[RMDB]
RNA sequence: GGGAACGACUCGAGUAGAGUCGAAAAGAUAUGGAAUGCCUACCCACCCGUCCCGUUUGACGUCCUUCGGAAACGAAGGACCGAGGACGGAGGGCAUUCCUAAGUCAAAGGCACGUUCGCGUGCCAACCAACUAUGGCACUUCGGUGCCAUAGUUGGAAAAGAAACAACAACAACAAC
Reactivity to 2A3 in 0.01 (KOAc 150mM, MgCl2 10mM, bicine 150mM(pH8.5), 24C), signal-to-noise 2, nucleotides 027 to 126: g060a060u120a190u250g000g000a000a040u010g000c000c030u130a300c120c030c030a030c000c030c000g000u000c000c000c000g040u050u180u300g190a130c110g010u000c000c010u040u000c040g010g020a040a080a060c020g000a030a020g000g000a010c010c020g020a050g000g010a010c000g000g010a000g000g000g010c020a010u000u010c000c000u000a040a020g090u000c080a150a070a250g020g000c000a000c000g050u110u130c300g000c020g110u000g020c000c000a000a000
Reactivity to DMS in 0.01 (KOAc 150mM, MgCl2 10mM, bicine 150mM(pH8.5), 24C), signal-to-noise 2, nucleotides 027 to 126: g000a180u000a150u000g010g000a000a000u000g020c000c000u000a140c010c000c030a300c070c000c010g030u000c010c000c190g000u000u000u010g010a210c300g000u010c000c000u000u000c030g000g010a110a000a250c010g030a030a000g000g000a000c000c060g000a140g000g000a000c000g000g000a010g000g000g000c010a020u000u000c000c000u000a030a050g010u000c130a070a100a180g000g000c000a010c010g000u000u020c130g010c040g000u000g000c000c000a020a070